[RMDB]
RNA sequence: GGGAACGACUCGAGUAGAGUCGAAAAAUAAAUAGGGAGAACGGGUUUCGUUUGAGGUCGUUCCCUGCGGCUGUAUAUUAGACUCUCUUUCCGAAUUUUAUCGUCUAAUAUAUAGCCGCAGGAAAAACGUUAUGUAUGGUUUCGACCAUACAUAACGAAAAGAAACAACAACAACAAC
Reactivity to DMS in 0.01 (KOAc 150mM, MgCl2 10mM, bicine 150mM(pH8.5), 24C), signal-to-noise 3, nucleotides 027 to 126: a060u010a040a040a110u010a130g010g010g000a100g000a040a040c060g010g010g010u010u000u000c040g010u000u010u000g010a110g010g020u000c010g000u000u000c020c000c000u000g000c000g010g020c000u010g020u000a000u000a000u000u000a010g000a020c000u000c170u000c080u000u010u000c120c090g020a080a120u020u010u020u000a090u020c110g000u000c000u010a000a000u000a000u000a000u000a010g020c000c000g010c000a000g000g000a030a050a040a070a090
Reactivity to 2A3 in 0.01 (KOAc 150mM, MgCl2 10mM, bicine 150mM(pH8.5), 24C), signal-to-noise 3, nucleotides 027 to 126: a000u140a030a070a060u210a090g060g050g000a160g020a080a020c040g090g000g050u050u170u150c030g010u030u090u180g040a030g020g120u030c000g000u010u000c000c010c000u000g000c000g000g000c000u000g010u020a010u000a000u000u000a010g000a010c000u060c010u040c000u230u110u080c080c060g140a190a170u150u180u120u130a160u280c030g000u000c000u000a000a000u000a010u000a000u000a000g010c010c000g010c000a000g000g000a000a010a000a010a000

Notes
The record gives the reactivity of an RNA of 177 nucleotides to DMS and 2A3. 2A3 adducts were read by reverse transcription with SuperScript II with manganese. For 2A3, 4,041 sequencing reads were counted.